Chemical mapping of a 177-nucleotide RNA with 2A3 and DMS. For 2A3, 4,108 sequencing reads were counted. Conditions: 150 mM KOAc, 10 mM MgCl2 and 150 mM bicine (pH 8.5), 24 C. DMS adducts were read by reverse transcription with MarathonRT.
RNA sequence: GGGAACGACUCGAGUAGAGUCGAAAAUAUCUAGCUCUUUCGAACUUUCUACCGGUGGACAAGAUUCUUGGAGCCUUACCCUUGUGUGGACCCAUACCGAAGUGUCUGACCGCUUCUCUGGAGUUUACAUACGAGGAGUGUUCGCACUCCUCGUAUGAAAAGAAACAACAACAACAAC
Reactivity to 2A3 in 0.01 (KOAc 150mM, MgCl2 10mM, bicine 150mM(pH8.5), 24C), signal-to-noise 4, nucleotides 027 to 126: u220a020u040c070u080a010g020c020u010c000u050u080u050c070g040a050a030c030u050u060u050c020u050a110c010c040g080g030u050g050g040a050c070a110a040g010a260u080u020c020u050u090g040g000a010g000c000c000u030u080a100c010c000c000u010u030g100u010g000u050g070g030a040c000c000c010a030u070a040c010c050g040a090a020g020u040g040u090c110u120g150a090c000c030g020c040u050u010c050u010c010u040g040g010a070g020u020u050u060a030
Reactivity to DMS in 0.01 (KOAc 150mM, MgCl2 10mM, bicine 150mM(pH8.5), 24C), signal-to-noise 3, nucleotides 027 to 126: u040a040u040c100u060a130g020c030u020c030u000u000u020c060g010a070a110c080u000u030u000c040u020a050c030c050g020g000u000g000g000a050c200a060a080g000a080u000u000c010u010u010g010g000a130g000c040c060u010u030a100c020c020c050u000u010g020u000g000u020g010g000a070c020c000c000a060u020a110c150c070g000a020a050g020u000g020u010c030u010g020a080c090c030g010c010u000u000c040u000c050u010g000g000a130g000u010u010u000a050